[RMDB]
RNA sequence: GGGAACGACUCGAGUAGAGUCGAAAACGAAGCUGGAUAGGCUUCGAUGUUGAGGGUGCUCAUGCUUCCCGUAAUGCAUGUGGCACCAAUGUGCCUCUACAAUUAGGAUUUUCAACUGGUGUGAACUCUAUUACUGUUCCUUCGGGAACAGUAAUAGAAAAGAAACAACAACAACAAC
Reactivity to DMS in 0.01 (KOAc 150mM, MgCl2 10mM, bicine 150mM(pH8.5), 24C), signal-to-noise 2, nucleotides 027 to 126: c000g010a020a000g060c000u000g010g030a150u050a130g000g010c020u010u000c000g000a070u000g010u000u000g010a090g010g000g040u000g010c010u000c010a010u000g020c010u010u010c030c020c040g030u010a120a090u000g020c000a030u000g010u010g010g040c000a010c000c040a040a040u010g000u000g000c040c010u000c080u010a040c120a050a100u010u000a060g010g000a110u000u000u010u010c030a060a070c050u020g000g020u010g000u020g000a090a080c150u000
Reactivity to 2A3 in 0.01 (KOAc 150mM, MgCl2 10mM, bicine 150mM(pH8.5), 24C), signal-to-noise 2, nucleotides 027 to 126: c000g000a000a000g030c030u100g060g150a270u190a200g030g020c010u000u000c010g000a050u080g030u020u100g020a100g000g040g050u000g010c010u000c000a000u020g010c020u070u060c060c020c000g030u220a100a100u180g020c000a000u000g000u130g010g000c000a000c000c000a010a000u040g010u040g010c010c010u060c010u030a040c070a080a030u120u050a100g070g040a080u090u060u020u090c090a090a060c080u060g020g040u070g080u040g070a030a010c000u000